[RMDB]
The record gives the reactivity of an RNA of 177 nucleotides to 2A3. The reactions ran in a buffer of 150 mM KOAc, 10 mM MgCl2 and 150 mM bicine (pH 8.5), at 24 C. For 2A3 the reverse transcriptase was SuperScript II with manganese. Values cover nucleotides 27 to 126. The 2A3 profile rests on 338 reads. It was measured as part of the RMDB library OK1LIB.

RNA sequence: GGGAACGACUCGAGUAGAGUCGAAAAACGGAUCGAAACGAAACAAUUAUGAACAUUAUCGACCAUAUUCGCAAUGUAAAUGGAAUUAAUAAUGAUGAUGUGAUUGUAACUCAUGAUGCCGUAAGACAGCGGGUCUCGAAUUCGUUCGAGACCCGCUAAAAGAAACAACAACAACAAC
Reactivity to 2A3 in 0.01 (KOAc 150mM, MgCl2 10mM, bicine 150mM(pH8.5), 24C), signal-to-noise 1, nucleotides 027 to 126: a000c000g000g000a000u020c010g030a000a000a190c000g020a080a000a000c000a030a030u000u000a020u040g300a000a000c000a000u050u000a000u000c060g100a110c000c000a000u070a260u020u000c000g000c300a130a210u290g000u150a010a010a010u050g000g030a160a000u180u300a050a210u160a010a000u080g080a160u000g060a050u050g000u000g000a000u000u000g000u130a080a000c000u000c080a000u020g000a000u000g100c000c000g020u000a000a100g000a000c000